[RMDB]
Chemical mapping of a 170-nucleotide RNA with DMS and 2A3.
RNA sequence: GGGAACGACUCGAGUAGAGUCGAAAAUCUUUGAUCUCCUGAAGGAGGAAGGAGCUCUCGAGCGCUCUCCCGCCCCUCGGAUGGGCCGCUUCCGGCGAACGAGCCCGAAGAGCGAGUGGGGGAGAACAUGGCCCUGUGUUCGCACAGGGCAAAAGAAACAACAACAACAAC
Reactivity to DMS in 0.01 (KOAc 150mM, MgCl2 10mM, bicine 150mM(pH8.5), 24C), signal-to-noise 3, nucleotides 027 to 129: u010c070u040u030u100g010a130u040c030u040c060c000u040g050a090a030g030g020a050g000g000a060a020g000g010a050g000c100u010c020u000c060g010a070g030c190g030c000u010c010u000c000c000c000g030c000c010c000c000u100c000g000g010a300u060g010g000g060c000c020g000c160u020u020c030c080g060g000c080g040a050a050c000g000a110g040c040c000c000g000a300a130g010a030g020c110g020a030g070u030g000g000g000g000g000a030g020a040a040c080a060u060g040
Reactivity to 2A3 in 0.01 (KOAc 150mM, MgCl2 10mM, bicine 150mM(pH8.5), 24C), signal-to-noise 2, nucleotides 027 to 129: u050c030u060u040u230g030a030u050c010u020c020c020u080g070a070a050g010g030a010g000g010a000a010g000g010a010g000c000u020c010u030c030g030a010g050c070g000c010u000c000u000c000c000c000g000c000c010c000c000u000c000g060g020a120u190g080g000g000c000c000g000c020u080u060c020c020g120g010c070g010a030a010c030g000a040g000c000c000c000g030a050a020g000a000g050c100g010a000g010u030g000g020g000g000g000a010g010a000a010c060a100u100g080
For 2A3 the reverse transcriptase was SuperScript II with manganese. For DMS, 10,093 sequencing reads were counted. The reactions ran in a buffer of 150 mM KOAc, 10 mM MgCl2 and 150 mM bicine (pH 8.5), at 24 C.